[RMDB]
RNA sequence: GGGAACGACUCGAGUAGAGUCGAAAAACGACAAAAUAUUUGCUUAGGUUAUGUUAAACAUGAAUCUGUCAGGUAUUAAUUCGUCAUGCUUCUUGUUUAUCCAACUUCCUUCGUGAUAAGUACGACAACUGCCAGUAUCAUUCGUGAUACUGGCAGUAAAAGAAACAACAACAACAAC
Reactivity to 2A3 in 0.01 (KOAc 150mM, MgCl2 10mM, bicine 150mM(pH8.5), 24C), signal-to-noise 1, nucleotides 027 to 126: a000c000g030a000c010a020a150a020a040u120a050u040u020u060g020c000u030u150a040g000g040u070u000a040u050g010u040u190a190a250a020c020a020u050g140a050a030u000c010u040g020u070c040a030g070g020u030a000u040u100a150a070u120u130c040g030u000c030a020u060g030c030u050u040c000u000u080g050u020u010u070a050u050c030c010a000a020c030u010u020c020c000u020u000c010g010u000g000a030u050a150a040g090u090a060c030g050a010c030a040
Reactivity to DMS in 0.01 (KOAc 150mM, MgCl2 10mM, bicine 150mM(pH8.5), 24C), signal-to-noise 2, nucleotides 027 to 126: a080c060g010a030c170a080a100a060a060u010a060u000u000u000g010c100u000u000a020g010g000u000u020a020u010g000u010u000a110a060a300c050a010u010g000a030a020u000c020u000g020u020c010a000g020g000u000a090u010u010a080a200u000u000c080g000u000c050a070u000g000c080u000u000c020u000u000g010u010u000u000a120u010c060c090a030a060c160u000u000c020c040u000u000c080g000u010g000a080u000a040a080g040u000a050c080g000a040c210a080